Structure probing data (2A3 and DMS) for a 177-nucleotide construct. 2A3 adducts were read by reverse transcription with SuperScript II with manganese. Conditions: 150 mM KOAc, 10 mM MgCl2 and 150 mM bicine (pH 8.5), 24 C. For 2A3, 572 sequencing reads were counted. Values cover nucleotides 27 to 126.
RNA sequence: GGGAACGACUCGAGUAGAGUCGAAAACAUGCAUUUUAUACCCAAAUCGACAUUUUUGUAGGUGUGUUAAGCAUGGAGAAAAAUGCAGCAGUUCAAGCUGGGACUUUGCCAGUGAGAUGAAGAAUUACUACCACUGCUGGUUCGCCAGCAGUGGUAGAAAAGAAACAACAACAACAAC
Reactivity to 2A3 in 0.01 (KOAc 150mM, MgCl2 10mM, bicine 150mM(pH8.5), 24C), signal-to-noise 1, nucleotides 027 to 126: c000a020u040g000c010a000u000u000u000u110a090u120a080c010c000c000a020a130a050u200c100g050a140c030a030u050u190u060u130u300g180u150a150g040g130u150g000u000g020u080u040a070a000g140c060a040u080g170g000a010g010a010a050a090a080a080u050g000c010a040g070c010a010g030u020u070c010a080a000g000c000u020g000g000g200a240c130u220u110u230g110c020c000a000g000u000g050a100g050a030u100g080a030a060g040a040a020u070u110a120
Reactivity to DMS in 0.01 (KOAc 150mM, MgCl2 10mM, bicine 150mM(pH8.5), 24C), signal-to-noise 1, nucleotides 027 to 126: c090a150u040g020c020a060u000u000u000u000a060u020a150c100c000c000a030a070a120u000c140g000a030c040a030u000u000u000u010u050g000u000a110g010g010u010g040u010g000u010u000a080a110g060c150a080u000g150g000a070g010a020a040a010a090a000u000g010c020a040g070c100a080g000u000u000c070a020a300g000c020u000g010g000g000a100c270u000u000u000g020c030c000a010g000u020g000a270g050a130u020g000a000a130g000a090a060u000u000a070